[RMDB]
Chemical mapping of a 177-nucleotide RNA with 2A3. The 2A3 profile rests on 596 reads. The RNA was probed in 150 mM KOAc, 10 mM MgCl2 and 150 mM bicine (pH 8.5) at 24 C. It was measured as part of the RMDB library OK1LIB. 2A3 adducts were read by reverse transcription with SuperScript II with manganese.

RNA sequence: GGGAACGACUCGAGUAGAGUCGAAAACAGCGGCUGCUGAUUGCGUUCCAGGGGGCAGAGUCGGGGAAGACAUUUACUCUCCCAGAACAGCCUAUCUCAUUCCUUUCCUUCAGUUACCCGUGGUGCACACUUCCGUCCACUUCGGUGGACGGAAGUGAAAAGAAACAACAACAACAAC
Reactivity to 2A3 in 0.01 (KOAc 150mM, MgCl2 10mM, bicine 150mM(pH8.5), 24C), signal-to-noise 1, nucleotides 027 to 126: c090a000g000c030g040g000c020u050g000c000u010g000a030u040u080g000c140g020u090u040c070c000a000g020g000g010g000g000c060a010g000a000g100u000c030g010g050g000g010a050a010g150a000c000a060u210u110u150a060c000u020c000u000c020c030c000a010g150a020a000c040a000g000c000c020u050a180u070c040u020c020a020u090u190c000c000u020u050u010c000c000u000u020c040a030g010u090u010a050c000c000c000g060u110g090g010u060g050c020a000